[RMDB]
RNA sequence: GGGAACGACUCGAGUAGAGUCGAAAAGAUAUGGAGGGACCUAGCUAGCUAAAUGUCGGAAACGACAUUGUAGCUUGGACCUAGCCCUCCUAAGUCAAAGCGAAAAACUCUUCGGAGUUUUUCGCAACCACUACCGUUGGUUCGCCAACGGUAGUGGAAAAGAAACAACAACAACAAC
Reactivity to DMS in 0.01 (KOAc 150mM, MgCl2 10mM, bicine 150mM(pH8.5), 24C), signal-to-noise 1, nucleotides 027 to 126: g020a010u000a170u000g000g000a010g050g010g020a230c230c010u000a000g010c030u000a010g030c010u010a050a040a000u000g020u000c010g010g000a030a040a120c000g020a010c000a000u010u020g010u000a040g020c000u010u020g030g000a030c300c000u000a030g010c000c000c010u000c000c000u000a000a060g000u000c010a120a110a240g010c000g020a000a030a010a000a010c000u020c000u000u010c300g020g000a000g000u000u000u010u000u000c000g010c000a000a030
The record gives the reactivity of an RNA of 177 nucleotides to DMS. It was measured as part of the RMDB library TTRDES. The reactions ran in a buffer of 150 mM KOAc, 10 mM MgCl2 and 150 mM bicine (pH 8.5), at 24 C.